An RNA of 177 nucleotides, treated with DMS and 2A3 and read out base by base. The 2A3 profile rests on 10,886 reads. 2A3 adducts were read by reverse transcription with SuperScript II with manganese. The DMS profile rests on 20,807 reads. The RNA was probed in 150 mM KOAc, 10 mM MgCl2 and 150 mM bicine (pH 8.5) at 24 C.
[RMDB]
RNA sequence: GGGAACGACUCGAGUAGAGUCGAAAAGAGAUUAGUGUUUGAGCCUUAUGGAGCUGAUUCUGCUGUUACAUGGUUCGUGUUUGAGUGGAAUGGGUCAUAGUCCAUGUGGCGAUUCUCGAUCAGCUCAGGACGAAGUAGGCUUCGGCUUACUUCGUCCAAAAGAAACAACAACAACAAC
Reactivity to DMS in 0.01 (KOAc 150mM, MgCl2 10mM, bicine 150mM(pH8.5), 24C), signal-to-noise 5, nucleotides 027 to 126: g000a070g010a070u010u010a060g010u010g020u000u000u000g010a190g010c060c010u010u020a070u020g000g000a010g010c020u000g010a020u000u010c060u010g010c150u010g020u000u000a010c030a020u000g010g010u030u020c080g020u020g010u010u000u000g000a080g050u020g010g000a040a030u000g010g000g000u010c080a090u020a080g000u000c010c000a020u000g010u000g010g000c010g010a120u010u000c020u010c090g010a050u000c060a030g010c020u000c030a170
Reactivity to 2A3 in 0.01 (KOAc 150mM, MgCl2 10mM, bicine 150mM(pH8.5), 24C), signal-to-noise 7, nucleotides 027 to 126: g060a000g010a040u050u120a080g060u030g070u060u050u060g020a020g020c000c010u090u070a110u160g080g000a010g000c010u010g020a000u060u010c010u070g090c060u070g050u100u020a010c020a020u020g080g140u110u170c090g040u090g090u130u120u090g120a100g020u110g030g140a120a060u070g070g020g020u080c040a030u050a030g020u000c000c010a010u000g020u000g010g000c010g010a030u080u000c010u000c000g010a010u000c010a010g030c000u010c020a010